Source: RMDB library OK2TRN, as collected in RNAgym. This 177-nucleotide RNA was probed chemically with 2A3 and DMS. For 2A3 the reverse transcriptase was SuperScript II with manganese.

[RMDB]
RNA sequence: GGGAACGACUCGAGUAGAGUCGAAAAUUGACGGUGGGGUCGUCUUUACUCCAAUGAGCAUCGAACCACAGCGAAGUGGGUUCAUCGCAAAGAUGCAUUAGUCACGGAGCCACGUCGACAUGGCUAACCACGAUAAUAUGUUCGCAUAUUAUCGUGGAAAAGAAACAACAACAACAAC
Reactivity to 2A3 in 0.01 (KOAc 150mM, MgCl2 10mM, bicine 150mM(pH8.5), 24C), signal-to-noise 6, nucleotides 027 to 126: u050u080g020a020c020g020g020u090g020g020g010g020u040c000g020u020c000u060u100u050a050c030u010c020c000a050a150u190g040a050g010c010a010u030c040g010a010a020c000c000a050c030a040g130c150g160a240a040g030u090g050g050g040u030u050c030a070u080c050g040c110a100a090a030g020a020u010g000c010a060u040u130a040g040u050c030a000c080g010g010a010g020c020c020a090c040g080u080c040g010a070c030a090u060g020g000c000u030a050a050
Reactivity to DMS in 0.01 (KOAc 150mM, MgCl2 10mM, bicine 150mM(pH8.5), 24C), signal-to-noise 8, nucleotides 027 to 126: u000u010g010a050c040g010g010u000g010g010g010g020u010c060g010u000c030u000u000u000a100c060u000c020c080a100a110u010g000a110g020c020a030u010c040g000a060a080c010c020a040c050a110g010c160g000a070a120g010u000g010g000g010u000u000c050a100u010c150g010c140a080a100a130g010a020u000g000c040a180u000u000a060g010u000c050a050c100g010g000a140g000c030c060a050c080g010u010c080g010a100c110a070u000g000g010c040u000a070a170